[RMDB]
RNA sequence: GGGAACGACUCGAGUAGAGUCGAAAAAGUACAAGGAGCUGCAGGACAUCAUCGCGAUCCUCGGUAUGGACGAGCUCUCCGAGGAGGACAAGGUCACCGUCAACCGGGCGCGCCGGAUCGAGCGCUACCUGUCGCAGAACUUCUUCGUCGCGAAGCAACGCAAGGGAUGUUUCGACAUCCCUUGCGUAAAAGAAACAACAACAACAAC
Reactivity to 2A3 in 0.01 (KOAc 150mM, MgCl2 10mM, bicine 150mM(pH8.5), 24C), signal-to-noise 1, nucleotides 027 to 156: a000g150u020a000c010a050a020g040g000a010g000c000u000g070c140a070g020g070a030c020a150u060c010a040u120c040g020c000g150a140u140c000c050u090c020g000g000u110a110u190g050g040a020c010g060a050g110c000u000c000u000c120c000g040a150g130g000a200g040g000a000c100a200a030g030g000u030c050a090c060c020g100u030c000a040a070c000c000g050g000g000c070g000c000g000c080c030g000g010a040u110c120g050a040g040c000g040c030u020a150c020c040u040g000u000c000g020c000a020g030a230a090c110u200u090c010u010u080c180g010u050c060g120c060g040a030a000g080c000a080
An RNA of 207 nucleotides, treated with 2A3 and read out base by base. The reactions ran in a buffer of 150 mM KOAc, 10 mM MgCl2 and 150 mM bicine (pH 8.5), at 24 C. 2A3 adducts were read by reverse transcription with SuperScript II with manganese.